[RMDB]
RNA sequence: GGGAACGACUCGAGUAGAGUCGAAAAAAGAUGAAGAUGUUUUGGCGAUGAGUGGUGGUUACACAUCAGUAUUAAUGUACUUAAUGUUACUGAACUGUACACUUAAAAUGAUGAAAAUGGUAAUUUUUAUGUUAUGUGUAUUUCAUCACAUAAAAAAACAGUGAUUCUUAUUCGUAAGAAUCACUGUAAAAGAAACAACAACAACAAC
Reactivity to 2A3 in 0.01 (KOAc 150mM, MgCl2 10mM, bicine 150mM(pH8.5), 24C), signal-to-noise 8, nucleotides 027 to 156: a000a000g030a010u030g010a000a020g000a010u030g040u030u050u060u060g010g000c020g000a020u020g020a020g050u070g030g010u010g010g020u050u070a020c070a000c000a050u100c040a020g070u070a090u100u090a090a060u120g030u050a010c030u070u120a090a050u120g030u050u020a030c020u040g060a100a010c020u030g040u080a000c020a010c030u050u030a080a050a100a100u070g010a010u020g020a020a030a040a090u050g030g030u070a070a150u040u020u000u020u040a020u030g000u010u010a000u010g030u000g070u060a170u070u230u100c000a000u000c000a000c010a010u050a010a030a000a000a020a000
Reactivity to DMS in 0.01 (KOAc 150mM, MgCl2 10mM, bicine 150mM(pH8.5), 24C), signal-to-noise 3, nucleotides 027 to 156: a040a080g020a020u010g000a030a050g010a030u000g010u000u000u000u000g020g010c010g030a080u010g000a050g020u000g020g060u000g000g020u000u000a090c050a110c060a120u010c050a050g010u000a090u000u000a050a070u000g010u000a030c040u000u000a090a140u000g030u000u000a220c050u000g010a020a090c080u010g020u000a030c030a070c120u000u000a040a070a050a040u000g010a030u000g000a050a020a040a040u000g010g010u000a050a100u000u000u010u010u010a050u020g020u000u000a020u000g020u000g010u010a140u000u010u000c020a070u010c060a020c010a050u020a010a000a030a070a050a110

An RNA of 207 nucleotides, treated with 2A3 and DMS and read out base by base. The reactions ran in a buffer of 150 mM KOAc, 10 mM MgCl2 and 150 mM bicine (pH 8.5), at 24 C. DMS (dimethyl sulfate) methylates the pairing face of unpaired adenines and cytosines. It was measured as part of the RMDB library OK3TST.